[RMDB]
RNA sequence: GGGAACGACUCGAGUAGAGUCGAAAACUGUGAGGCUGGCCCGGACUGUAAGUUUGAAGGGAGCUCACCCAGCUUGUAUCACUAUGCAGGAGUCUAACAGCAACCAAGCAUUUUCCACGUGUCAUAGCCUUUGAAAUAAUCACAUAUGGCAUCAAGAUCCACUACCUGGAUUCGUCCAGGUAGUGGAAAAAGAAACAACAACAACAAC
Reactivity to 2A3 in 0.01 (KOAc 150mM, MgCl2 10mM, bicine 150mM(pH8.5), 24C), signal-to-noise 1, nucleotides 027 to 156: c050u120g020u000g050a020g040g100c020u020g020g030c000c000c000g000g000a050c010u160g130u300a110a030g040u080u140u160g170a060a050g010g000g000a020g020c050u090c000a120c000c000c000a010g000c020u010u100g030u040a120u070c000a000c100u040a070u150g090c000a020g020g020a020g120u000c020u120a170a060c000a000g080c000a030a060c040c070a070a000g020c000a030u040u100u100u000c020c000a060c000g020u000g000u010c020a010u020a070g040c030c100u120u100u080g040a050a070a060u220a050a000u150c040a040c000a090u000a000u050g030g000c000a020u040c020a050a050g000a220